[RMDB]
RNA sequence: GGGAACGACUCGAGUAGAGUCGAAAAGAUAUGGACGAUCCAACGAGCGUCUCGGAAACGAGAACGCGAUGAGUUGGUCGUCCUAAGUCAAAAGUACCGUCGCAUUGUUCGCAAUGCGACGGUACAACAAGACGAUCUUGUUCGCAAGAUCGUCUUGAAAAGAAACAACAACAACAAC
Reactivity to 2A3 in 0.01 (KOAc 150mM, MgCl2 10mM, bicine 150mM(pH8.5), 24C), signal-to-noise 2, nucleotides 027 to 126: g020a000u080a040u190g000g000a000c000g010a010u220c060c040a000a010c010g030a020g010c010g010u000c000u030c020g040g000a070a060a060c010g010a010g040a140a090c020g040c040g050a170u170g080a070g000u020u000g000g010u010c000g000u000c010c000u000a010a010g040u000c000a030a060a000a080g000u000a000c010c000g010u000c020g000c000a000u040u030g080u120u200c300g030c220a010a000u000g000c000g000a000c000g020g000u010a010c000a000a000
Reactivity to DMS in 0.01 (KOAc 150mM, MgCl2 10mM, bicine 150mM(pH8.5), 24C), signal-to-noise 2, nucleotides 027 to 126: g000a040u010a300u000g010g000a010c000g000a030u030c010c000a020a010c000g010a170g020c010g010u010c010u030c000g020g010a090a070a210c010g020a000g000a060a030c000g030c000g000a110u030g000a130g010u000u000g000g010u000c000g020u000c010c000u010a020a060g010u010c040a090a080a100a100g000u000a000c000c000g060u000c000g000c000a010u000u010g000u000u020c230g010c000a020a000u000g030c000g000a010c000g010g020u010a000c000a020a140